[RMDB]
RNA sequence: GGGAACGACUCGAGUAGAGUCGAAAAUAUUCUGACGGAACAUGAAAUCAGAUUUCAUGUGGAUCCCAUAUCAAGUCAGAUAUGGAGUGGUCCCAUCUGGGAUUAUUCACAGUCUCAGAUUUGUGAAGAUAGUAGAGUAUUUCGAUGCUUUGCUAUCAAAAGAAACAACAACAACAAC
Reactivity to 2A3 in 0.01 (KOAc 150mM, MgCl2 10mM, bicine 150mM(pH8.5), 24C), signal-to-noise 9, nucleotides 027 to 126: u110a030u070u080c010u010g030a020c040g050g050a060a020c000a010u010g010a000a010a020u160c120a120g150a300u000u000u010c010a000u000g010u050g020g040a050u070c030c020c000a030u060a020u140c060a090a050g120u030c020a020g010a000u010a030u040g040g010a050g040u110g010g030u020c010c000c000a010u010c010u000g010g000g000a000u020u040a110u200u220c110a090c050a100g010u000c000u000c000a010g020a040u070u110u130g120u070g060a100a130
Reactivity to DMS in 0.01 (KOAc 150mM, MgCl2 10mM, bicine 150mM(pH8.5), 24C), signal-to-noise 9, nucleotides 027 to 126: u010a020u020u010c010u000g010a020c010g010g020a100a020c010a000u000g000a010a010a010u010c250a140g000a300u000u000u010c000a000u000g000u000g000g000a120u010c010c000c020a050u030a070u030c110a090a140g010u010c020a010g010a000u000a020u000g010g000a020g010u010g000g010u000c000c000c000a060u000c020u000g000g000g000a010u000u000a050u030u070c300a100c210a030g000u000c000u000c010a010g000a010u000u020u010g010u020g010a150a130